[RMDB]
RNA sequence: GGGAACGACUCGAGUAGAGUCGAAAAGAUAUGGAUAGUGCAAGGCGCUGUUCGGAAACGAACAGGGCAAGUCGCUGAUGACCACUGAUCCUAAGUCAAAAGACCCUGUUCUUCGGAACAGGGUCAAGGAGAGUAUAGUCUUCGGACUAUACUCUCCAAAAGAAACAACAACAACAAC
Reactivity to DMS in 0.01 (KOAc 150mM, MgCl2 10mM, bicine 150mM(pH8.5), 24C), signal-to-noise 3, nucleotides 027 to 126: g000a070u010a300u000g010g010a010u000a020g020u000g000c200a090a090g020g030c000g000c000u000g000u000u000c010g020g000a110a110a190c000g010a000a010c000a020g000g000g010c070a040a100g010u010c070g010c200u020g030a200u000g010a060c280c020a020c020u000g010a020u000c000c010u000a060a160g010u000c030a060a070a110a130g000a020c000c000c010u000g000u000u000c000u000u010c210g020g000a000a020c000a010g000g000g010u010c000a000a010
Reactivity to 2A3 in 0.01 (KOAc 150mM, MgCl2 10mM, bicine 150mM(pH8.5), 24C), signal-to-noise 2, nucleotides 027 to 126: g000a000u040a020u190g000g020a020u010a050g040u010g020c070a150a110g220g030c120g000c230u010g000u010u020c000g010g010a090a080a050c020g000a000a000c010a020g030g020g040c000a000a010g060u050c020g080c270u200g200a300u280g070a050c010c040a010c020u020g150a030u000c010c000u030a300a100g110u040c050a000a140a060a110g040a000c040c000c000u000g000u020u000c050u020u060c300g110g000a000a000c020a000g000g000g000u000c000a000a000
Source: RMDB library TTRDEL, as collected in RNAgym. Structure probing data (DMS and 2A3) for a 177-nucleotide construct. The 2A3 profile rests on 1,964 reads. The DMS profile rests on 2,627 reads. The reactions ran in a buffer of 150 mM KOAc, 10 mM MgCl2 and 150 mM bicine (pH 8.5), at 24 C.